[RMDB]
RNA sequence: GGGAACGACUCGAGUAGAGUCGAAAAGUCGCCGCCUCUACAUCAACGCCCAGCGCGGGCGAGGGAGGCGUCCUACGGGGGUGACCCAUUCGCCGGCAUGGUAGAGGACAGCAAGAUUGCCGCGACGAGUACGAUGACGUUUCGACGUCAUCGUACUAAAAGAAACAACAACAACAAC
Reactivity to DMS in 0.01 (KOAc 150mM, MgCl2 10mM, bicine 150mM(pH8.5), 24C), signal-to-noise 2, nucleotides 027 to 126: g000u000c010g020c050c060g000c030c010u000c000u000a060c030a110u020c180a170a140c230g000c010c020c010a100g020c110g010c070g000g040g010c010g010a050g010g000g010a100g010g010c030g020u000c010c000u000a100c210g070g030g000g000g000u000g030a180c030c010c000a200u000u000c010g030c020c000g030g000c030a250u010g010g000u000a050g000a040g000g000a130c100a170g010c080a080a130g010a150u030u000g030c050c020g000c000g000a020c120g000
Reactivity to 2A3 in 0.01 (KOAc 150mM, MgCl2 10mM, bicine 150mM(pH8.5), 24C), signal-to-noise 1, nucleotides 027 to 126: g020u000c000g020c080c020g050c000c020u000c000u050a110c080a080u120c090a140a050c040g140c040c020c020a000g130c260g050c150g080g000g000c020g010a040g070g010g000a280g000g050c000g010u000c010c010u020a150c110g280g000g000g000g030u040g040a120c070c000c000a010u020u000c020g000c010c000g110g000c030a060u130g040g030u030a020g000a000g020g110a110c060a010g000c000a030a120g110a300u150u100g000c000c010g030c010g050a050c000g040

The record gives the reactivity of an RNA of 177 nucleotides to DMS and 2A3. The RNA was probed in 150 mM KOAc, 10 mM MgCl2 and 150 mM bicine (pH 8.5) at 24 C. It was measured as part of the RMDB library OK2TRN.